An RNA of 177 nucleotides, treated with 2A3 and DMS and read out base by base. Values cover nucleotides 27 to 126. It was measured as part of the RMDB libraries RFM100 and RFMREP.
[RMDB]
RNA sequence: GGGAACGACUCGAGUAGAGUCGAAAAACGUAGCUACGGCUACGAGCCUGUUGGAAAGCAGCGAGCAUUACGGUCAUUCUGACGCUGGAGAAUAUGACAGUAAUGCCCGCUGACUUCUAAUGGAGAACGUAGGUUCAGAAUUCGUUCUGAACCUACGAAAAGAAACAACAACAACAAC
Reactivity to 2A3 in 0.01 (KOAc 150mM, MgCl2 10mM, bicine 150mM(pH8.5), 24C), signal-to-noise 8, nucleotides 027 to 126: a000c010g000u000a000g000c000u030a020c260g130g000c000u010a000c000g000a010g060c010c010u040g010u030u040g010g020a050a060a030g000c000a000g000c000g000a000g000c000a000u000u000a010c000g020g000u000c000a000u020u000c020u110g220a170c160g080c230u180g120g070a050g000a050a030u260a090u130g000a000c010a010g000u000a000a010u000g000c000c000c000g000c000u000g000a010c000u000u000c000u010a020a040u070g060g030a090g040a140a000
Reactivity to DMS in 0.01 (KOAc 150mM, MgCl2 10mM, bicine 150mM(pH8.5), 24C), signal-to-noise 4, nucleotides 027 to 126: a130c010g010u010a000g020c000u000a080c200g030g000c000u000a000c000g010a100g010c030c000u020g020u000u010g000g000a030a010a020g020c000a000g010c000g000a060g000c000a000u000u000a010c010g000g010u000c000a010u000u000c010u010g010a130c090g010c160u020g020g010a040g010a040a040u040a060u020g010a010c010a020g000u000a010a010u000g000c000c010c000g020c000u000g000a020c010u000u000c020u000a040a010u010g000g000a170g020a120a160